RNA sequence: GGGAACGACUCGAGUAGAGUCGAAAACGCUGGCGCUAUCGCGGGUGGCCGCCGAGGCACCGGAGGACACCAUCGUGUUCUGCGGAGUGCACUUCAUGGCCGAGACCGCCAAAAUUCUCAGCCCGCAAGUAAAUAGGACUUUCGAGUCCUAUUUACUAAAAGAAACAACAACAACAAC
Reactivity to 2A3 in 0.01 (KOAc 150mM, MgCl2 10mM, bicine 150mM(pH8.5), 24C), signal-to-noise 4, nucleotides 027 to 126: c050g020c080u030g020g000c020g000c070u070a030u160c060g010c000g010g020g000u050g000g020c010c010g040c050c080g010a030g000g010c010a010c010c000g010g110a000g000g000a000c000a000c030c050a240u220c180g000u000g000u010u000c010u050g100c020g030g030a160g120u100g010c070a100c190u080u060c030a090u140g010g000c010c000g010a040g010a020c010c020g010c000c010a070a180a000a080u140u030c040u000c030a020g030c010c000c000g000c000a000
Reactivity to DMS in 0.01 (KOAc 150mM, MgCl2 10mM, bicine 150mM(pH8.5), 24C), signal-to-noise 7, nucleotides 027 to 126: c140g000c140u000g000g010c030g020c060u000a100u000c100g010c020g000g010g030u010g010g010c010c020g020c160c260g010a040g010g010c010a060c010c000g010g010a020g000g000a010c010a010c010c270a140u000c150g010u000g010u000u000c000u000g000c010g000g000a100g010u000g010c020a090c030u000u010c090a150u010g010g020c010c020g000a060g010a130c300c010g010c010c050a020a060a100a090u010u000c040u000c050a130g010c010c010c010g010c050a120